Overview:
This 170-nucleotide RNA was probed chemically with DMS and 2A3. For 2A3 the reverse transcriptase was SuperScript II with manganese. Reactivities are rounded to 0.1 and cut off at 0 and 3. The DMS profile rests on 73,313 reads.
RNA sequence: GGGAACGACUCGAGUAGAGUCGAAAAGCUGAUGGGCUCUGCUUAUUUUGGAACUGUAAUGUACCAAAAUAUCCUAAUAAUGCAAUUGUAUGCAGGUUUGACACACGUGUGCAUUCUGAGUUCAAUUAAGGAUAGGUGUUCGCACCUAUCAAAAGAAACAACAACAACAAC
Reactivity to DMS in 0.01 (KOAc 150mM, MgCl2 10mM, bicine 150mM(pH8.5), 24C), signal-to-noise 9, nucleotides 027 to 129: g000c060u030g030a070u020g040g010g020c080u030c000u010g000c030u020u030a050u010u010u000u000g020g010a090a030c030u000g010u070a090a050u070g000u000a060c040c020a000a010a040a030u030a060u020c010c000u000a070a070u060a070a060u020g030c050a030a090u030u030g010u040a060u030g000c050a050g010g020u000u020u020g020a120c080a070c080a040c150g020u030g040u010g000c020a030u010u010c000u030g010a090g020u040u030c050a040a060u050u030a070a110g030
Reactivity to 2A3 in 0.01 (KOAc 150mM, MgCl2 10mM, bicine 150mM(pH8.5), 24C), signal-to-noise 9, nucleotides 027 to 129: g040c040u060g020a090u100g050g040g000c000u010c010u030g030c030u050u030a050u030u060u030u040g020g010a020a010c010u030g060u290a060a110u200g020u040a060c010c000a000a010a010a020u060a030u030c010c030u070a120a080u170a130a040u120g050c040a020a080u080u100g040u070a040u070g040c050a020g050g070u040u050u090g120a080c010a000c000a000c060g100u110g000u010g140c010a010u030u010c030u060g060a040g040u020u050c030a050a100u110u090a100a020g120